[RMDB]
RNA sequence: GGGAACGACUCGAGUAGAGUCGAAAAGCGUUUAUGAGCUACAUGAACGAAGAGCAUACUUAGUCAAAGUAUGCAGAAGCCUUCUGUAGCUCAGAGGGCAGGACUAAUGUUUGACUAACAUUAGGGAUAUCGACUAUUUAUUCGUAAAUAGUCGAUAAAAAGAAACAACAACAACAAC
Reactivity to DMS in 0.01 (KOAc 150mM, MgCl2 10mM, bicine 150mM(pH8.5), 24C), signal-to-noise 9, nucleotides 027 to 126: g010c050g010u010u000u010a100u010g010a020g010c010u000a010c000a010u020g010a010a010c110g010a040a040g010a300g000c000a000u000a000c000u000u000a130g010u020c300a070a050a020g010u000a000u000g010c000a040g010a130a140g000c050c070u000u000c000u000g010u000a010g010c010u000c000a010g000a060g000g000g010c030a120g010g010a110c010u000a010a010u000g000u000u000u010g010a140c270u010a080a010c000a010u000u000a010g000g000g010a180
Reactivity to 2A3 in 0.01 (KOAc 150mM, MgCl2 10mM, bicine 150mM(pH8.5), 24C), signal-to-noise 6, nucleotides 027 to 126: g020c080g050u030u040u040a210u050g000a010g000c010u020a010c010a040u270g010a030a010c070g020a050a040g030a010g040c000a000u000a000c000u030u070a030g110u140c040a120a020a010g000u000a000u000g000c000a000g050a050a000g030c000c000u000u000c000u000g000u000a000g000c000u000c000a000g000a000g000g040g000c050a040g080g090a020c000u010a010a010u010g050u020u020u110g150a100c060u060a020a000c000a000u000u010a010g010g020g020a020

Chemical mapping of a 177-nucleotide RNA with DMS and 2A3. The DMS profile rests on 28,896 reads. Conditions: 150 mM KOAc, 10 mM MgCl2 and 150 mM bicine (pH 8.5), 24 C. The data come from the RNA Mapping Database (RMDB), library OK2TRN. 2A3 adducts were read by reverse transcription with SuperScript II with manganese. For 2A3, 17,124 sequencing reads were counted.